RNA sequence: GGGAACGACUCGAGUAGAGUCGAAAAUAUGUCACUUGAGUUUAUUAUGGAGCAUCAAUUGUAAAGAUAGCUCAAAUGCCAUGAUUCUCCUAAGGUUGCAGCCCAAAUGGGUGCAAAUAGAAUUUGCAGCGUAUGUUUUUUUCGAAAAACAUACGCUAAAAGAAACAACAACAACAAC
Reactivity to DMS in 0.01 (KOAc 150mM, MgCl2 10mM, bicine 150mM(pH8.5), 24C), signal-to-noise 3, nucleotides 027 to 126: u020a010u000g000u000c020a000c030u000u010g000a020g000u000u000u000a020u020u010a100u020g000g000a300g010c030a030u010c260a090a150u000u000g000u020a070a170a190g000a020u000a020g000c010u000c000a010a020a020u010g000c010c010a020u000g010a090u010u010c110u000c010c070u010a050a100g020g010u000u010g020c010a070g010c020c000c020a100a060a080u000g000g030g030u000g000c000a010a000a030u000a090g000a070a300u000u010u000g000c300
Reactivity to 2A3 in 0.01 (KOAc 150mM, MgCl2 10mM, bicine 150mM(pH8.5), 24C), signal-to-noise 2, nucleotides 027 to 126: u130a040u020g030u010c000a000c010u030u030g000a010g030u210u300u040a060u040u080a180u200g150g020a080g060c000a020u040c130a170a260u160u020g010u060a030a080a040g010a030u020a050g000c000u010c000a030a030a040u010g000c060c000a010u080g010a070u080u020c050u030c000c000u080a090a050g150g000u080u020g000c030a200g090c020c000c030a160a300a130u230g040g020g010u010g010c000a030a000a040u090a080g090a040a100u000u060u300g080c000